Structure probing data (2A3 and DMS) for a 207-nucleotide construct. For DMS the reverse transcriptase was MarathonRT. The DMS profile rests on 1,759 reads. High 2A3 reactivity points to a flexible backbone, as in loops and unpaired stretches. Source: RMDB library M2RFPK, as collected in RNAgym. The reactions ran in a buffer of 150 mM KOAc, 10 mM MgCl2 and 150 mM bicine (pH 8.5), at 24 C. For 2A3 the reverse transcriptase was SuperScript II with manganese.
RNA sequence: GGGAACGACUCGAGUAGAGUCGAAAAAGCAGGAGUACGCUCCUGCAUGGGUAGACGAAUUGACCCCAACUGAAGUUCAAUUCUAACGUUAAAAGGAGAUUUAUAUGACUGGACGUACGCGUCCAGAUGACGAUUUCAUUCUUCGGAAUGAAAUCAAUCCCGUAUAGUUGUUCGCAACUAUACGGGAAAAAGAAACAACAACAACAAC
Reactivity to 2A3 in 0.01 (KOAc 150mM, MgCl2 10mM, bicine 150mM(pH8.5), 24C), signal-to-noise 2, nucleotides 027 to 156: a000g010c020a020g000g010a000g000u010a040c200g040c110u000c000c000u000g000c000a010u010g010g010g000u080a130g070a160c040g010a000a000u000u000g000a000c000c000c000c010a080a040c100u230g040a000a000g000u090u000c000a010a000u010u000c010u140a140a090c080g060u090u170a010a100a040a000g140g020a060g010a070u090u180u050a100u180a060u240g090a060c010u000g000g000a000c000g000u070a000c230g000c000g070u000c000c000a000g000a000u050g000a000c070g000a000u000u000u000c000a000u000u000c000u030u010c020g070g000a000a000u000g010a000a000a000u000c000a000a030
Reactivity to DMS in 0.01 (KOAc 150mM, MgCl2 10mM, bicine 150mM(pH8.5), 24C), signal-to-noise 1, nucleotides 027 to 156: a120g030c000a040g000g000a070g040u000a050c300g110c050u000c000c000u000g000c080a010u000g010g000g000u000a060g040a120c150g010a040a010u000u020g000a050c020c010c010c030a090a270c180u000g000a060a000g000u000u000c040a000a050u000u000c010u010a140a130c100g000u000u000a050a050a050a190g000g020a280g000a150u010u000u010a090u000a080u030g000a190c010u000g010g020a010c000g020u000a040c190g070c050g000u000c000c000a020g000a010u020g050a120c070g030a020u000u000u000c020a020u000u010c010u010u020c290g040g000a000a010u000g000a010a000a000u000c000a120a130